Structure probing data (DMS) for a 177-nucleotide construct.
[RMDB]
RNA sequence: GGGAACGACUCGAGUAGAGUCGAAAAUCUUGGUCUUGUGCGCAAAGUACGCAAAAAAGCAGUCAAAAGCGCUUGGAGUGUGACGCACGGAAUCUGAGAGUGUUUCGGUAAAGGCCGAAACCUAAAACUAAUACUCGUGCUUCGGCACGAGUAUUAGAAAAGAAACAACAACAACAAC
Reactivity to DMS in 0.01 (KOAc 150mM, MgCl2 10mM, bicine 150mM(pH8.5), 24C), signal-to-noise 1, nucleotides 027 to 126: u000c000u000u000g040g020u000c020u000u020g010u000g010c000g040c050a120a120a180g000u040a030c000g010c000a010a080a150a070a010a020g020c010a040g020u010c040a030a070a160a130g010c120g000c040u000u000g010g030a300g040u000g030u000g000a060c030g010c000a020c000g000g000a100a040u030c010u020g010a140g000a050g000u020g000u000u000u000c020g000g000u000a040a210a090g000g040c000c010g000a010a000a010c000c030u000a020a020a040a030

It was measured as part of the RMDB library RFMREP. For DMS, 671 sequencing reads were counted. Reactivities are rounded to 0.1 and cut off at 0 and 3. The RNA was probed in 150 mM KOAc, 10 mM MgCl2 and 150 mM bicine (pH 8.5) at 24 C.